[RMDB]
RNA sequence: GGGAACGACUCGAGUAGAGUCGAAAAAUUCUUACUCAAAAAGACAAGGGAGGAAUGCCGCAAGAAACCAAAGAAAAUCAUGGGUUUCAUUAAACUUCAUUAUUGAAGAGGUUUAAUAAAGCUGGUUUCAUGGGGUAUGGUUCGCCAUACCCCAUGAAAAAGAAACAACAACAACAAC
Reactivity to 2A3 in 0.01 (KOAc 150mM, MgCl2 10mM, bicine 150mM(pH8.5), 24C), signal-to-noise 1, nucleotides 027 to 126: a000u190u000c030u000u130a140c010u100c020a000a170a200a150a000g190a110c100a170a130g010g080g000a000g030g060a100a060u040g000c000c000g070c080a050a050g000a000a060a060c000c000a020a020a020g130a110a230a000a000u160c060a190u150g000g000g000u000u000u020c000a000u000u000a000a000a000c000u000u000c040a270u000u270a090u070u190g040a180a000g000a110g070g000u000u000u010a020a020u040a000a120a000g050c110u150g010g090u010u000